[RMDB]
RNA sequence: GGGAACGACUCGAGUAGAGUCGAAAAAGAGGCGAUACGUCGCCUCAUGCUUGGUGCUUAGCUUCUUUCACCAAGCAUAUUACACGCGGAUAACCGCCAAAGGAGAAACACUGACUACGGUCAGUGAGGAAGUUGGUUCGGUUCGCCGAACCAACAAGACGCAAUAUUACUUCGGUAAUAUUGCGUCAAAAGAAACAACAACAACAAC
Reactivity to 2A3 in 0.01 (KOAc 150mM, MgCl2 10mM, bicine 150mM(pH8.5), 24C), signal-to-noise 3, nucleotides 027 to 156: a000g010a000g010g010c010g000a000u030a070c210g080u010c000g000c010c000u000c000a010u000g000c010u010u000g030g000u000g000c030u030u050a090g010c000u030u020c010u010u020u010c000a000c010c000a000a000g030c000a000u000a010u010u110a030c080a020c020g000c000g010g040a090u080a300a260c010c010g010c020c020a040a030a010g010g000a020g030a030a100a000c000a000c010u000g000a000c010u030a020c150g070g000u020c000a000g000u010g010a000g030g050a070a110g000u000u000g000g030u000u000c010g010g000u040u020c070g020c110c000g000a000a000c000c000a000a000c000a000a000
Reactivity to DMS in 0.01 (KOAc 150mM, MgCl2 10mM, bicine 150mM(pH8.5), 24C), signal-to-noise 1, nucleotides 027 to 156: a220g020a030g000g060c000g010a050u000a050c280g000u000c000g070c000c030u000c010a000u020g000c040u000u010g030g010u000g000c060u000u000a060g010c060u000u000c000u000u000u000c010a030c000c010a030a010g000c000a020u020a000u000u000a100c030a080c150g000c020g030g000a150u000a140a210c020c000g060c040c080a040a070a090g000g060a100g000a230a040a100c010a010c000u010g010a050c010u000a080c300g070g000u000c000a000g020u000g000a090g000g030a060a110g010u000u000g000g000u010u010c020g030g000u010u010c300g000c020c000g010a020a010c010c030a000a020c020a020a100